[RMDB]
RNA sequence: GGGAACGACUCGAGUAGAGUCGAAAACUGCAGCUCAGUGCAGCUGCCGGAUACUUUGAAACUAUCAUGCUACAUUUUGCUGAUCCAGAAAAGAUCAAAACUCAAAGUACUGUUUCCACUGAGUGUGCGGUAACUGAUAGUUCGCUAUCAGUUACCGAAAAGAAACAACAACAACAAC
Reactivity to DMS in 0.01 (KOAc 150mM, MgCl2 10mM, bicine 150mM(pH8.5), 24C), signal-to-noise 4, nucleotides 027 to 126: c010u000g010c010a090g000c010u000c030a040g020u000g020c090a030g010c030u010g010c300c060g000g020a110u000a000c020u000u000u010g010a040a110a100c160u010a090u010c120a090u000g020c020u010a090c170a140u000u010u000u010g020c060u000g010a050u000c040c080a120g000a090a060a100a120g010a060u010c060a040a080a100a110c160u000c000a030a010a020g010u000a010c040u000g000u000u010u000c050c030a050c030u000g000a030g000u000g020u000g000
Reactivity to 2A3 in 0.01 (KOAc 150mM, MgCl2 10mM, bicine 150mM(pH8.5), 24C), signal-to-noise 4, nucleotides 027 to 126: c000u010g000c020a000g020c000u000c010a030g070u020g030c040a040g020c050u060g010c010c000g000g030a110u020a040c000u090u020u030g030a100a080a030c050u050a080u240c050a080u220g040c020u090a120c030a300u130u210u120u210g030c010u020g000a030u020c000c020a160g160a190a170a040a010g020a030u050c000a020a040a070a110c050u020c000a030a020a000g020u020a000c010u020g000u020u040u030c010c000a020c000u010g040a020g020u200g120u120g090
Chemical mapping of a 177-nucleotide RNA with DMS and 2A3. The 2A3 profile rests on 3,739 reads. For 2A3 the reverse transcriptase was SuperScript II with manganese. The reactions ran in a buffer of 150 mM KOAc, 10 mM MgCl2 and 150 mM bicine (pH 8.5), at 24 C. For DMS, 2,517 sequencing reads were counted. The data come from the RNA Mapping Database (RMDB), library OK2TRN.